[RMDB]
RNA sequence: GGGAACGACUCGAGUAGAGUCGAAAAGAACGUUUCGCCCUCGCCGCUUAAACACCGGUGAGCGUCUCAACGGCAGGCCGAUGGGCCGGGCCCAAGCCGCAAGGUGGAAGGCUGAGACGUCAUGCACAUCGGCUGGUUGCUCGUCGGGUCACUCGGCUCCAAACCAAUGAUUCGUCAUUGGUUUGGAAAAAGAAACAACAACAACAAC
Reactivity to 2A3 in 0.01 (KOAc 150mM, MgCl2 10mM, bicine 150mM(pH8.5), 24C), signal-to-noise 3, nucleotides 027 to 156: g060a070a020c050g010u000u030u020c030g000c020c000c050u030c060g010c010c000g020c030u100u150a090a140a030c090a100c070c010g010g010u000g000a010g010c020g030u000c030u050c110a080a060c070g080g010c020a030g030g040c000c010g020a020u020g000g000g000c020c010g000g000g000c020c010c000a000a000g010c000c000g030c080a100a060g040g000u050g020g040a030a020g010g000c020u020g050a040g020a100c050g040u080c050a040u100g000c020a010c000a030u000c000g010g000c010u030g080g020u120u220g000c020u050c020g030u010c000g030g000g000u020c010a000c080u040c000g000g000c010
Reactivity to DMS in 0.01 (KOAc 150mM, MgCl2 10mM, bicine 150mM(pH8.5), 24C), signal-to-noise 1, nucleotides 027 to 156: g030a070a070c020g030u000u010u000c040g030c030c060c000u000c030g030c000c000g020c020u000u000a120a110a050c120a080c070c020g050g000u000g010a120g040c080g030u060c090u000c060a070a050c050g000g040c010a170g090g020c010c020g000a090u000g020g000g020c000c080g000g000g030c000c010c020a110a240g010c000c010g030c140a120a130g020g030u000g000g000a130a150g020g010c000u020g020a070g020a010c030g010u000c050a080u000g010c030a060c020a030u000c010g020g020c020u000g000g020u010u000g000c020u000c040g020u010c050g010g010g000u020c040a140c060u010c010g030g000c050

Source information
Chemical mapping of a 207-nucleotide RNA with 2A3 and DMS. For 2A3 the reverse transcriptase was SuperScript II with manganese. The reactions ran in a buffer of 150 mM KOAc, 10 mM MgCl2 and 150 mM bicine (pH 8.5), at 24 C. Reactivities are given for positions 27 through 156.